RNA sequence: GGGAACGACUCGAGUAGAGUCGAAAAAGAACUUUCUACGCCUUUUCCUCUAUGGCUAUGAAAGCGUGGACAACGGAGAUCAAAUAGACCAAUUACUGAAUAUGGCUUUUGACAUAUCUUCUUCUUCGAUGAUCUGUUACUUCGGUAACAGAUCAUCAAAAGAAACAACAACAACAAC
Reactivity to 2A3 in 0.01 (KOAc 150mM, MgCl2 10mM, bicine 150mM(pH8.5), 24C), signal-to-noise 5, nucleotides 027 to 126: a000g060a040a030c000u060u020u000c000u000a000c070g010c000c000u060u080u070u050c050c000u120c020u110a180u280g000g000c000u010a020u080g030a000a010a010g000c020g070u060g020g030a020c030a120a030c100g020g000a030g000a070u030c020a000a010a040u130a140g150a300c000c000a040a020u110u070a100c090u220g120a140a070u220a200u110g010g000c000u020u020u010u030g020a020c040a040u180a060u070c030u100u000c000u030u010c010u020u040c090
Reactivity to DMS in 0.01 (KOAc 150mM, MgCl2 10mM, bicine 150mM(pH8.5), 24C), signal-to-noise 2, nucleotides 027 to 126: a100g000a140a060c030u000u000u000c000u000a130c260g000c000c000u000u000u030u010c010c000u020c190u000a040u030g010g030c030u010a100u050g000a010a070a000g020c060g010u010g000g000a090c150a030a010c070g020g030a020g000a080u000c060a010a040a070u040a020g010a110c000c010a010a040u020u030a080c240u040g000a030a030u010a100u000g010g010c020u010u040u000u000g030a080c210a090u050a110u030c010u030u000c100u000u000c050u000u020c300
Structure probing data (2A3 and DMS) for a 177-nucleotide construct. The RNA was probed in 150 mM KOAc, 10 mM MgCl2 and 150 mM bicine (pH 8.5) at 24 C.